[RMDB]
RNA sequence: GGGAACGACUCGAGUAGAGUCGAAAAACGGGCGGCCGGUCGACGAGUAGCGGAAUCACUCCCUCUGAACGCGGAUUUCGGUCCAGUAGAUCUCGUUCUCGUACCGGACCACGUACCUGCCGUUCGGGAUCGGAGCGCAGUUCGCUGCGCUCCGAUCAAAAGAAACAACAACAACAAC
Reactivity to 2A3 in 0.01 (KOAc 150mM, MgCl2 10mM, bicine 150mM(pH8.5), 24C), signal-to-noise 2, nucleotides 027 to 126: a000c000g000g000g040c020g000g040c040c030g000g060u050c150g160a150c060g000a020g110u150a060g080c090g040g110a060a080u110c000a040c050u120c030c000c000u020c020u020g020a150a050c000g020c100g130g140a160u040u130u250c050g030g010u100c090c000a010g010u050a000g110a000u000c020u000c120g080u200u000c000u000c080g010u010a060c020c020g000g010a000c000c000a050c000g000u050a030c010c000u000g070c030c000g020u020u000c000g020g010